[RMDB]
RNA sequence: GGGAACGACUCGAGUAGAGUCGAAAAGACAGCGGGGAACCGAGCCUUACAAAGCUUUGAGUAAGGAACGGAAUUUAUGAAGCUACUGAAGUGAAAAGCUUGUUUGUAGGCGUUUCAUGGAGGGAAUGUUAAAAUACAAACUGCACUCGGAGAUGCUCUUACAACUGUAGUUCGCUACAGUUGUAAGAAAAGAAACAACAACAACAAC
Reactivity to DMS in 0.01 (KOAc 150mM, MgCl2 10mM, bicine 150mM(pH8.5), 24C), signal-to-noise 2, nucleotides 027 to 156: g020a090c030a050g040c060g000g010g010g050a180a220c030c030g000a110g020c000c000u000u000a000c040a030a110a120g010c020u010u010u020g000a300g000u000a060a030g010g000a100a020c010g000g020a130a090u000u000u000a030u030g000a050a040g010c010u010a180c000u000g010a250a300g020u000g010a010a020a020a020g000c000u020u000g000u000u000u000g020u000a030g000g020c000g020u000u000u000c020a030u000g000g020a220g010g020g000a050a030u000g010u000u000a050a020a030a090u000a040c020a010a030a030c030u000g000c030a120c070u000c040g020g030a140g020a130u000g000c100u000
Reactivity to 2A3 in 0.01 (KOAc 150mM, MgCl2 10mM, bicine 150mM(pH8.5), 24C), signal-to-noise 5, nucleotides 027 to 156: g070a010c030a000g040c060g020g000g000g010a010a010c000c000g010a020g000c000c000u010u000a000c010a000a010a010g000c000u010u020u010g010a010g000u000a000a000g000g000a020a040c010g010g050a010a000u120u070u020a020u030g010a000a000g010c000u000a010c000u010g010a030a010g010u000g010a010a010a000a000g000c000u010u020g010u010u010u000g000u020a000g000g000c000g000u000u010u000c010a000u020g000g010a040g020g010g010a000a000u010g000u030u110a030a010a010a020u010a000c010a010a020a000c010u040g010c040a050c040u070c100g090g060a130g060a130u070g020c010u000
An RNA of 207 nucleotides, treated with DMS and 2A3 and read out base by base.
For 2A3, 11,227 sequencing reads were counted.
For DMS the reverse transcriptase was MarathonRT.
The reactions ran in a buffer of 150 mM KOAc, 10 mM MgCl2 and 150 mM bicine (pH 8.5), at 24 C.
Values are in units of 0.01, from 0 to 300, in steps of 10.
It was measured as part of the RMDB library ARCHII.
In probing experiments dimethyl sulfate is read out at A N1 and C N3, which are open when not base-paired.